About this RNA:
An RNA of 207 nucleotides, treated with 2A3 and DMS and read out base by base.
[RMDB]
RNA sequence: GGGAACGACUCGAGUAGAGUCGAAAACGCCCUGGCCGUCUUGAUAACAGUGGACAUGACACAGUGGACGUGGCUGGGCGGGGCCACCCCGUUACUUCUCUCCACUCUCUCCUCUAGGCAGGGCGGUCUGUAGCUCAAACCCCUUUAAUUGGGGGAGGAAGCCUAUAUUAUUCGUAAUAUAGGCUUCAAAAGAAACAACAACAACAAC
Reactivity to 2A3 in 0.01 (KOAc 150mM, MgCl2 10mM, bicine 150mM(pH8.5), 24C), signal-to-noise 5, nucleotides 027 to 156: c060g000c000c000c000u020g050g050c020c010g040u080c010u050u070g040a070u060a210a070c060a060g000u020g010g020a030c060a170u150g010a030c060a020c030a130g010u010g020g020a050c090g040u020g030g020c090u050g020g000g020c020g010g000g000g010c070c020a150c040c030c000c000g020u020u030a190c020u080u030c020u000c000u000c020c000a000c010u010c000u000c000u010c020c000u030c030u060a060g040g030c000a000g010g000g000c010g000g000u010c010u050g100u050a030g020c010u020c070a110a080a250c010c120c180c020u060u120u110a160a140u250u170g000g000g000g010g010a020g040
Reactivity to DMS in 0.01 (KOAc 150mM, MgCl2 10mM, bicine 150mM(pH8.5), 24C), signal-to-noise 2, nucleotides 027 to 156: c030g000c010c010c000u010g010g020c030c000g020u000c020u020u020g020a120u010a080a140c090a070g020u000g000g030a070c110a090u010g000a090c130a180c080a080g010u010g000g020a080c080g020u000g010g010c060u010g000g000g000c020g020g020g020g010c110c100a090c040c010c010c020g000u000u000a030c040u000u010c020u000c030u000c020c010a040c020u000c010u000c050u010c040c020u000c040u000a140g020g000c070a040g020g020g030c000g020g010u000c010u000g010u000a060g010c040u000c050a110a140a120c000c000c010c000u000u000u000a100a260u000u010g000g010g010g020g000a040g030
2A3 adducts were read by reverse transcription with SuperScript II with manganese.
In probing experiments dimethyl sulfate is read out at A N1 and C N3, which are open when not base-paired.
The 2A3 profile rests on 4,171 reads.
Conditions: 150 mM KOAc, 10 mM MgCl2 and 150 mM bicine (pH 8.5), 24 C.